[RMDB]
RNA sequence: GGGAACGACUCGAGUAGAGUCGAAAAGGAAAAGAGGAGAAAGCGCGCACUCCUCAAAGCGCGCAAAAUACCGCGCCAAGAGAAAGUACCGCGCCAAAGGGUGGGAGGCGCGGACCCACCCAAAAAACAAACCAAAUUAGUUCGCUAAUUUGGUUUGAAAAGAAACAACAACAACAAC
Reactivity to DMS in 0.01 (KOAc 150mM, MgCl2 10mM, bicine 150mM(pH8.5), 24C), signal-to-noise 2, nucleotides 027 to 126: g020g010a070a030a090a150g000a150g000g000a060g020a060a110a070g020c000g050c010g000c030a170c020u000c020c010u000c070a050a110a100g010c000g030c010g030c080a040a010a090a120u000a080c100c020g000c050g010c000c020a150a100g000a140g000a120a050a100g010u000a060c080c010g020c030g020c020c080a060a060a180g040g030g040u000g000g000g020a110g000g000c000g000c010g000g000a020c040c010c000a020c010c030c020a000a030a030a050a050a090
Conditions: 150 mM KOAc, 10 mM MgCl2 and 150 mM bicine (pH 8.5), 24 C. The record gives the reactivity of an RNA of 177 nucleotides to DMS. For DMS, 1,156 sequencing reads were counted. Reactivities are given for positions 27 through 126.